[RMDB]
RNA sequence: GGGAACGACUCGAGUAGAGUCGAAAAUAAGCCAAAGGGAUGUCCCGACCGGAGGCCGACAAUCCAGGGAACAGGAUGUCAUCACGUUGUUGCAGUACCAGAUGGCAUCUUAAAUCCGAUCUGCAAAAAAAGUCUUACACCUUCGGGUGUAAGACAACCUAAGACAGGAGUUCGCUCCUGUCUUAGGAAAAGAAACAACAACAACAAC
Reactivity to 2A3 in 0.01 (KOAc 150mM, MgCl2 10mM, bicine 150mM(pH8.5), 24C), signal-to-noise 1, nucleotides 027 to 156: u100a000a030g020c020c020a000a000a010g060g000g010a030u030g020u030c050c010c000g010a000c010c000g000g000a040g030g000c010c020g070a030c070a190a070u110c140c110a040g000g000g000a020a030c010a060g020g020a000u000g010u010c000a010u000c000a010c150g060u060u020g080u050u030g020c010a010g010u080a110c000c050a150g000a000u010g000g010c000a000u020c010u030u000a080a070a000u100c090c020g040a030u030c000u080g000c020a010a010a010a010a010a010a010g000u000c000u000u000a000c000a000c000c010u050u180c280g120g000g000u000g000u010a000a000g000a000c000a000a000
Reactivity to DMS in 0.01 (KOAc 150mM, MgCl2 10mM, bicine 150mM(pH8.5), 24C), signal-to-noise 1, nucleotides 027 to 156: u000a090a130g010c040c000a060a300a220g010g030g000a080u010g000u000c010c020c000g030a150c030c020g060g010a300g010g040c030c040g020a070c080a060a080u000c000c020a050g000g000g040a040a120c140a160g000g030a030u000g020u010c020a030u000c050a300c160g020u000u020g000u000u000g000c020a060g000u020a070c090c130a120g000a010u000g040g040c010a010u000c030u010u010a050a040a090u000c010c000g000a040u000c040u000g010c030a000a000a110a120a090a080a200g000u000c000u010u000a000c040a000c000c010u000u000c300g040g000g000u010g020u000a000a010g000a000c030a000a060
Record summary: Conditions: 150 mM KOAc, 10 mM MgCl2 and 150 mM bicine (pH 8.5), 24 C. Structure probing data (2A3 and DMS) for a 207-nucleotide construct. It was measured as part of the RMDB library M2RFPK. Values cover nucleotides 27 to 156. DMS adducts were read by reverse transcription with MarathonRT. The DMS profile rests on 1,500 reads. High DMS reactivity at an A or C suggests that its Watson-Crick edge is free.